[RMDB]
RNA sequence: GGGAACGACUCGAGUAGAGUCGAAAAGGUGAAGCACUGCCCGGAGGCGUCGAGGUUGCCGAACGCGUAGUUGAUGUGGGUCAGUUUCGAGGCGGUGCCGGAGGUGACCAGGUCCUUGACGUAGAACUGCCGGUCGUAGAUCGACCACUGCGUGAAGCUGGUAUUGCUAAUUCGUUAGCAAUACCAGAAAAGAAACAACAACAACAAC
Reactivity to 2A3 in 0.01 (KOAc 150mM, MgCl2 10mM, bicine 150mM(pH8.5), 24C), signal-to-noise 4, nucleotides 027 to 156: g070g030u120g050a050a010g020c030a010c050u010g030c030c000c010g020g030a060g030g030c030g030u060c050g030a030g020g060u100u170g020c010c020g060a100a060c020g000c030g070u090a070g030u060u130g070a160u130g020u110g070g000g010u070c060a100g130u020u070u050c030g010a040g020g000c000g000g040u050g010c000c010g050g010a050g000g020u010g020a030c000c030a030g040g030u050c000c000u000u020g020a000c010g010u020a020g050a180a050c070u130g060c110c080g000g000u000c000g010u060a100g030a250u220c020g010a010c000c010a010c020u030g010c020g000u030g050a030a010g040
Reactivity to DMS in 0.01 (KOAc 150mM, MgCl2 10mM, bicine 150mM(pH8.5), 24C), signal-to-noise 2, nucleotides 027 to 156: g010g010u000g020a110a140g040c030a050c030u000g020c000c030c020g010g000a120g020g010c020g010u050c040g030a140g010g010u000u010g020c030c030g030a050a100c050g000c060g020u010a110g050u000u000g010a070u010g040u010g010g010g000u000c040a060g010u000u010u000c020g000a190g010g010c020g020g010u000g030c010c000g000g020a140g030g000u000g000a110c020c020a160g000g020u010c020c010u000u000g010a050c020g060u000a050g010a060a090c060u000g040c040c010g020g000u000c030g020u000a120g030a070u010c010g020a030c010c160a220c030u000g020c040g040u000g000a070a090g010